Structure probing data (2A3) for a 207-nucleotide construct. For 2A3, 1,235 sequencing reads were counted. For 2A3 the reverse transcriptase was SuperScript II with manganese. Values cover nucleotides 27 to 156.

RNA sequence: GGGAACGACUCGAGUAGAGUCGAAAAGGGGUCUGUUUCGGCUCGAUGAAAGGCUUGGAUUUAUGGGACUGAAGCCUCCACGGUCCCAUUGUCAGCCUAACCGAGCUGAAACAGACGGAGGCACCCAAACAAGUCAGACGUUCGCGUCUGACUUGAACUGUACCGCUUACUUCGGUAAGCGGUACAGAAAAGAAACAACAACAACAAC
Reactivity to 2A3 in 0.01 (KOAc 150mM, MgCl2 10mM, bicine 150mM(pH8.5), 24C), signal-to-noise 2, nucleotides 027 to 156: g150g000g050g000u000c000u010g000u000u000u000c000g000g000c000u000c030g130a190u290g150a180a170a020g020g020c120u190u280g150g020a110u210u170u120a010u050g000g000g020a000c000u000g040a090a000g060c030c010u010c000c020a040c010g000g040u000c000c000c000a000u000u010g030u040c040a000g000c010c000u000a060a010c150c010g000a000g020c000u000g000a000a000a000c000a000g010a000c000g000g010a010g000g000c000a050c010c000c010a010a100a000c020a000a000g000u000c000a000g000a000c000g030u070u130c280g060c010g150u060c020u000g010a000c000u020u020g000a020a010